[RMDB]
RNA sequence: GGGAACGACUCGAGUAGAGUCGAAAAACGAUGCCACGAUUCUUGCUGCAUUCGGUGCUUGUGUUCUGACACGGAAAUGCAAUUUCUUGGCUUUCCAAAAGUUUCAAAGAAGCAUGAUCACUACCAACAGAACCAAAAGGUUCGCCUUUUGGUUCUGAAAAGAAACAACAACAACAAC
Reactivity to 2A3 in 0.01 (KOAc 150mM, MgCl2 10mM, bicine 150mM(pH8.5), 24C), signal-to-noise 9, nucleotides 027 to 126: a010c070g020a040u100g020c020c030a050c040g060a080u080u050c040u080u120g060c050u040g010c020a050u080u090c060g080g000u030g010c030u060u070g040u040g030u160u050c050u070g040a050c030a030c100g050g020a020a050a040u180g010c020a040a130u050u080u040c040u060u110g050g000c000u010u010u000c020c000a040a050a030a090g050u080u090u080c120a130a110a020g060a070a000g040c020a030u060g020a020u070c030a020c080u090a090c030c000a050a090
Reactivity to DMS in 0.01 (KOAc 150mM, MgCl2 10mM, bicine 150mM(pH8.5), 24C), signal-to-noise 3, nucleotides 027 to 126: a090c120g010a020u010g030c020c040a090c080g000a060u030u010c060u010u010g000c050u010g000c110a040u000u010c020g010g000u010g000c080u000u000g010u000g010u000u000c060u050g000a110c090a100c100g000g020a010a100a070u020g000c000a040a060u020u010u010c050u000u020g010g020c010u000u000u000c040c020a110a060a090a110g030u000u000u010c080a070a050a070g000a050a080g000c050a020u000g000a060u000c050a090c050u030a070c070c070a150a150